[RMDB]
RNA sequence: GGGAACGACUCGAGUAGAGUCGAAAAUGACUACAACCAGUACAAGUACCUGAUGGAAACCCGCAUCUCGGGCGCCCUGACCAAGGCCAAGUCGGCCAUCGUCAUCAAGCGCGAGGUCGGCAUCGUGGUUACUCCGCUGAGCCCGUCCUUCAACUCCCAUGUAGUACGUAUUCGUACGUACUACAUGAAAAGAAACAACAACAACAAC
Reactivity to DMS in 0.01 (KOAc 150mM, MgCl2 10mM, bicine 150mM(pH8.5), 24C), signal-to-noise 2, nucleotides 027 to 156: u000g000a180c040u000a120c050a060a110c020c030a080g010u010a120c060a140a130g040u000a090c030c000u020g000a120u000g000g000a100a130a100c140c000c020g000c110a060u000c020u000c020g010g010g000c020g040c100c020c050u040g010a060c020c050a140a140g020g010c000c020a110a210g030u010c150g040g020c000c000a030u000c080g000u000c010a060u000c070a100a080g010c000g000c020g000a050g020g010u000c020g010g000c040a030u010c020g020u000g020g010u000u000a110c030u000c010c030g040c010u000g010a060g050c010c000c050g000u000c020c040u010u010c040a060a130c050u010c020c020
Reactivity to 2A3 in 0.01 (KOAc 150mM, MgCl2 10mM, bicine 150mM(pH8.5), 24C), signal-to-noise 7, nucleotides 027 to 156: u100g020a000c020u060a040c120a080a070c040c010a020g020u080a050c040a170a000g010u010a030c010c020u030g010a020u040g040g120a120a120a110c040c010c000g020c070a040u000c010u010c020g160g110g000c010g020c020c040c010u010g010a010c000c050a080a080g010g000c010c000a140a080g240u210c070g030g000c000c000a090u080c030g020u000c000a050u060c040a080a020g020c050g000c000g060a000g000g010u000c000g010g010c000a010u040c030g110u060g010g000u080u050a020c020u020c030c080g000c020u020g020a020g020c030c020c020g010u020c020c000u110u140c030a090a070c040u050c020c020